Source: RMDB library OK2TRN, as collected in RNAgym. An RNA of 177 nucleotides, treated with 2A3 and DMS and read out base by base. For DMS the reverse transcriptase was MarathonRT. The DMS profile rests on 1,676 reads.
RNA sequence: GGGAACGACUCGAGUAGAGUCGAAAAGGAGAAACGGAAUGCAUAAACAGUUUGCCCGCAUCAUUGGCAUAUUUUUCUUAUUAGGUUUGCUGGCCCCAUUGAGUUGGGCUGACGCUCCUGCAUGGCACCAGAGUGUGUGAUUCGUCACACACUCUGGAAAAGAAACAACAACAACAAC
Reactivity to 2A3 in 0.01 (KOAc 150mM, MgCl2 10mM, bicine 150mM(pH8.5), 24C), signal-to-noise 2, nucleotides 027 to 126: g050g000a080g060a020a100a000c040g020g050a120a020u080g030c000a030u110a120a090a080c010a050g000u040u120u110g050c010c030c070g050c000a140u060c030a010u000u100g040g000c040a080u080a160u120u150u020u030u000c070u070u090a230u030u220a030g010g080u090u080u120g110c030u040g050g020c000c010c000c010a020u060u250g090a130g030u180u120g050g030g000c000u030g050a020c030g010c020u040c010c000u000g000c020a100u080g040g060c040a010
Reactivity to DMS in 0.01 (KOAc 150mM, MgCl2 10mM, bicine 150mM(pH8.5), 24C), signal-to-noise 2, nucleotides 027 to 126: g030g000a070g030a050a070a080c070g000g000a110a040u000g010c030a060u010a050a070a070c130a060g000u000u010u010g000c010c020c040g000c070a090u000c060a060u000u010g020g010c030a090u010a020u000u000u000u000u000c060u020u010a100u000u000a070g000g000u020u000u010g020c070u010g010g030c030c030c010c030a130u000u010g000a090g000u020u000g030g000g040c020u010g020a000c080g010c040u000c030c020u000g010c050a020u010g020g000c130a120